[RMDB]
RNA sequence: GGGAACGACUCGAGUAGAGUCGAAAAAGUAGGUGACUAUGUCAUUAUUAGUGAAAAAUUGUUUGUGCGUAGUAAGGAAGAAGACGGAUUUGCCUUCUACCCUGCUUGCACUAAUGGUCAUGCUGUAGAAAAAGUAGUUCUUCGGAACUACUUUUUCAAAAGAAACAACAACAACAAC
Reactivity to DMS in 0.01 (KOAc 150mM, MgCl2 10mM, bicine 150mM(pH8.5), 24C), signal-to-noise 1, nucleotides 027 to 126: a060g000u000a030g020g010u000g010a020c040u000a050u000g000u010c040a030u000u000a090u000u010a080g020u000g000a040a060a060a070a120u000u010g000u000u000u000g000u000g020c010g020u010a010g030u010a000a020g010g010a220a010g000a020a010g000a000c010g000g020a190u000u010u010g010c010c000u000u000c000u000a040c030c010c020u000g010c010u020u000g000c010a010c000u000a030a020u000g010g010u010c050a050u000g010c030u010g010u000a180
Reactivity to 2A3 in 0.01 (KOAc 150mM, MgCl2 10mM, bicine 150mM(pH8.5), 24C), signal-to-noise 2, nucleotides 027 to 126: a000g140u120a010g000g000u010g050a000c010u070a060u150g100u030c040a010u050u260a060u070u130a080g060u070g130a040a010a000a080a090u160u140g040u060u070u070g010u010g010c010g030u020a000g000u020a040a030g000g000a010a000g000a010a000g000a030c100g050g120a200u130u050u300g010c000c000u000u000c000u020a020c000c000c020u010g010c020u010u010g010c010a000c000u010a040a030u030g010g000u000c010a010u050g120c060u040g020u100a120